[RMDB]
RNA sequence: GGGAACGACUCGAGUAGAGUCGAAAAAUUGGAAUACUCAUCGAAUUUGUCAUAGUGUUUCAGUUGUGUUAUGGAACCAAUUUUUCUCCCACUCCCAUACUUACCACCCAAUUAAUGGCACAGCUAGUUCAAGUUUGGUUUUCGAACCAAACUUGAAAAAAGAAACAACAACAACAAC
Reactivity to DMS in 0.01 (KOAc 150mM, MgCl2 10mM, bicine 150mM(pH8.5), 24C), signal-to-noise 2, nucleotides 027 to 126: a050u010u040g000g000a080a030u010a050c050u010c080a040u000c080g000a070a110u020u010u010g030u000c040a110u010a070g000u010g020u000u000u000c040a080g030u000u000g000u000g040u010u020a090u010g020g010a120a100c040c030a030a010u000u040u000u000u000c060u010c010c010c010a150c100u000c010c010c000a070u000a040c080u010u000a100c090c040a070c030c040c040a110a130u020u020a050a080u010g020g000c030a030c020a040g020c000u020a070g010
Reactivity to 2A3 in 0.01 (KOAc 150mM, MgCl2 10mM, bicine 150mM(pH8.5), 24C), signal-to-noise 2, nucleotides 027 to 126: a020u000u000g000g040a020a020u060a080c020u010c120a110u140c070g100a100a220u090u010u130g220u080c030a010u170a080g080u030g090u030u010u020c000a020g000u050u010g070u020g030u070u070a020u170g130g020a060a020c000c000a040a030u000u000u000u020u000c100u020c000c020c000a030c050u060c000c000c000a010u040a110c000u000u020a050c000c030a030c000c010c040a000a060u110u060a100a000u100g030g020c020a050c000a070g140c050u040a030g140
An RNA of 177 nucleotides, treated with DMS and 2A3 and read out base by base. The reactions ran in a buffer of 150 mM KOAc, 10 mM MgCl2 and 150 mM bicine (pH 8.5), at 24 C. It was measured as part of the RMDB libraries RFM100 and RFMREP. For 2A3 the reverse transcriptase was SuperScript II with manganese. Values cover nucleotides 27 to 126.